[RMDB]
RNA sequence: GGGAACGACUCGAGUAGAGUCGAAAAUCAUCGCCUACUUUGUGCUGCGAUGGAAACUGCACAUGAUUCGCUAAGCGGACAGCUUGUGGGAUUUGCUCAUAGUCUAGGAAUAUCAUUAUUACCAUACAACCAUGACACUUUUCGAAGUGUCAUGGUUAAAAGAAACAACAACAACAAC
Reactivity to DMS in 0.01 (KOAc 150mM, MgCl2 10mM, bicine 150mM(pH8.5), 24C), signal-to-noise 4, nucleotides 027 to 126: u010c050a040u000c080g000c020c080u010a070c100u000u010u000g020u010g020c090u000g030c030g020a040u000g000g000a060a080a140c070u000g000c050a040c100a060u010g010a130u000u000c030g030c020u000a090a090g020c020g000g010a080c160a070g020c040u000u000g010u010g010g010g010a130u000u000u000g010c040u000c060a070u000a080g010u010c040u000a120g000g000a090a030u010a060u000c080a060u000u000a070u010u010a160c030c020a130u000a090c180
Reactivity to 2A3 in 0.01 (KOAc 150mM, MgCl2 10mM, bicine 150mM(pH8.5), 24C), signal-to-noise 3, nucleotides 027 to 126: u030c000a000u040c010g030c000c020u080a080c040u200u160u230g080u130g050c080u010g010c030g050a040u060g010g030a060a090a000c040u120g030c030a010c010a120u090g030a180u100u040c020g020c070u050a060a060g030c010g000g050a040c020a050g030c010u070u090g030u030g030g070g030a060u110u030u110g010c010u010c020a090u070a050g050u020c030u010a040g030g050a090a050u030a040u130c090a040u000u150a070u100u080a100c030c020a020u070a130c040